Annotation:
An RNA of 177 nucleotides, treated with DMS and 2A3 and read out base by base. High 2A3 reactivity points to a flexible backbone, as in loops and unpaired stretches. Values cover nucleotides 27 to 126.

RNA sequence: GGGAACGACUCGAGUAGAGUCGAAAAGCGAUACGCUAUUAUCGCCGCUAUCGCCGCGCGAUAUAUCGCUAUAUACGCAUAGCGAUACGCAUAAUAUAUUAUGCGCGCGCGCGCCGCGCGUAUCGCCAUACACGGUCUUAUUCGUAAGACCGUGUAUAAAAGAAACAACAACAACAAC
Reactivity to DMS in 0.01 (KOAc 150mM, MgCl2 10mM, bicine 150mM(pH8.5), 24C), signal-to-noise 6, nucleotides 027 to 126: g020c000g010a010u000a010c050g010c020u000a120u000u000a110u000c080g020c040c050g010c090u000a040u010c050g010c040c130g030c180g000c000g010a100u000a090u000a000u000c010g000c010u000a000u000a110u010a100c300g010c150a070u000a000g010c000g000a000u000a040c020g000c000a010u000a010a060u010a160u010a100u000u000a000u000g000c000g000c110g020c010g020c100g010c060g020c170c220g010c180g010c010g010u000a000u000c010g010c000c210
Reactivity to 2A3 in 0.01 (KOAc 150mM, MgCl2 10mM, bicine 150mM(pH8.5), 24C), signal-to-noise 6, nucleotides 027 to 126: g000c000g000a010u000a000c030g000c070u070a130u260u130a100u220c080g030c090c020g040c060u090a060u130c030g000c100c060g050c030g000c000g040a010u030a020u010a000u140c000g000c010u000a010u000a000u030a050c170g070c180a020u010a000g000c000g010a000u010a020c020g000c020a000u030a020a050u270a040u090a090u200u020a010u020g000c020g000c000g010c000g000c010g000c020g020c050c030g070c000g000c000g010u000a000u010c000g000c010c010